[RMDB]
RNA sequence: GGGAACGACUCGAGUAGAGUCGAAAAUUCUGGAACAGGGCCCAGUCGGCAUGGGGUAUGGUGGCGACCAGAAGUUCGGCCAGCUCCACGGCAUGGGCGGUUGGGCCGUUCAAGCUGUCGCCAAGCACUAUUAAAUGACCUUCGGGUCAUUUAAUAGAAAAGAAACAACAACAACAAC
Reactivity to 2A3 in 0.01 (KOAc 150mM, MgCl2 10mM, bicine 150mM(pH8.5), 24C), signal-to-noise 3, nucleotides 027 to 126: u030u000c010u040g050g040a100a030c030a110g070g000g040c020c000c000a010g030u020c020g030g020c010a030u030g000g000g000g000u080a170u100g060g020u040g060g100c010g000a010c030c000a050g040a120a020g040u020u040c010g020g000c010c000a010g020c010u030c020c020a070c030g110g030c120a140u120g050g030g000c040g010g000u060u040g030g010g000c010c010g000u010u000c040a050a080g000c000u020g020u050c020g000c030c000a020a010g060c030a020
Reactivity to DMS in 0.01 (KOAc 150mM, MgCl2 10mM, bicine 150mM(pH8.5), 24C), signal-to-noise 6, nucleotides 027 to 126: u010u010c030u000g010g010a100a090c090a080g020g010g020c020c010c020a100g020u010c040g010g000c030a050u000g000g000g000g010u000a040u010g010g020u000g000g010c030g000a030c080c080a060g010a090a090g020u000u000c010g010g000c010c010a060g000c010u000c020c040a080c100g010g010c070a190u000g000g000g010c100g000g000u000u000g010g010g000c000c000g010u000u000c020a050a100g010c040u000g010u000c030g000c000c020a120a090g010c160a230